[RMDB]
Chemical mapping of a 177-nucleotide RNA with 2A3 and DMS.

RNA sequence: GGGAACGACUCGAGUAGAGUCGAAAAGUUUGAGACCAACCUGGGCAACGGGCAAAACCCCAUCUCUACAAAAAAUUUAAAAGUUCGCUGGGUGCGGUGGCACUUGCCUGUAGUCCCAGCUACUCGGCCCCGAGUAUAAUUUCGAUUAUACUCGGGGAAAAGAAACAACAACAACAAC
Reactivity to 2A3 in 0.01 (KOAc 150mM, MgCl2 10mM, bicine 150mM(pH8.5), 24C), signal-to-noise 1, nucleotides 027 to 126: g090u110u200u140g050a070g000a060c000c100a080a080c000c000u000g000g000g000c010a100a000c040g010g000g030c050a000a000a020a080c000c020c000c000a050u040c020u000c000u020a070c040a030a120a020a090a030a020u160u230u300a130a220a030a070g030u100u050c080g050c080u090g010g070g150u100g030c100g060g040u040g040g000c040a010c110u000u060g020c000c020u020g010u020a050g040u080c010c000c000a000g000c000u010a080c000u000c010g090g000
Reactivity to DMS in 0.01 (KOAc 150mM, MgCl2 10mM, bicine 150mM(pH8.5), 24C), signal-to-noise 1, nucleotides 027 to 126: g000u000u000u000g000a140g000a130c040c050a140a120c190c010u000g000g000g030c040a270a030c090g030g020g000c030a040a030a160a160c180c160c000c030a030u000c000u010c000u000a070c030a000a040a110a050a020a040u010u000u020a060a110a070a140g010u000u000c060g000c300u000g000g010g010u010g010c140g010g000u000g010g000c080a070c150u000u000g000c000c010u000g000u000a100g020u000c000c010c020a030g010c060u000a020c020u000c090g000g020

Description
The reactions ran in a buffer of 150 mM KOAc, 10 mM MgCl2 and 150 mM bicine (pH 8.5), at 24 C.